[RMDB]
RNA sequence: GGGAACGACUCGAGUAGAGUCGAAAAACAGUCAGAUGAGGCCUCAUGUUCGUUACGACUUGUAUGAUGGUAACAUGUUUAUUAAAUUUCCUGAAGUAGUAUUUGAAAGUACACUUAGGAUUACUAGCUACUACACGCUUCGGCGUGUAGAAAAGAAACAACAACAACAAC
Reactivity to DMS in 0.01 (KOAc 150mM, MgCl2 10mM, bicine 150mM(pH8.5), 24C), signal-to-noise 4, nucleotides 027 to 129: a100c090a140g010u030c090a060g020a090u040g020a120g010g020c000c050u000c040a030u020g020u070u030c100g020u000u000a150c090g000a000c090u000u000g030u040a060u020g020a100u060g030g030u030a030a040c100a090u050g010u050u000u030a000u000u060a030a020a030u050u010u010c040c010u010g020a000a010g030u040a190g030u000a030u010u020u020g000a140a080a090g010u020a010c050a050c030u030u030a090g020g010a060u040u000a020c150u010a050g000c100u010a050
Reactivity to 2A3 in 0.01 (KOAc 150mM, MgCl2 10mM, bicine 150mM(pH8.5), 24C), signal-to-noise 4, nucleotides 027 to 129: a030c030a010g080u140c040a000g010a080u090g050a170g010g030c000c000u020c010a030u060g010u030u080c000g050u040u070a070c080g000a050c090u010u080g030u060a070u050g100a040u060g050g050u040a010a040c010a080u000g000u050u080u020a140u020u120a130a060a020u070u030u010c000c000u000g040a010a000g040u140a000g000u020a080u020u040u130g250a130a050a060g000u010a000c000a000c000u060u010a030g010g010a000u000u000a070c050u030a000g020c050u020a040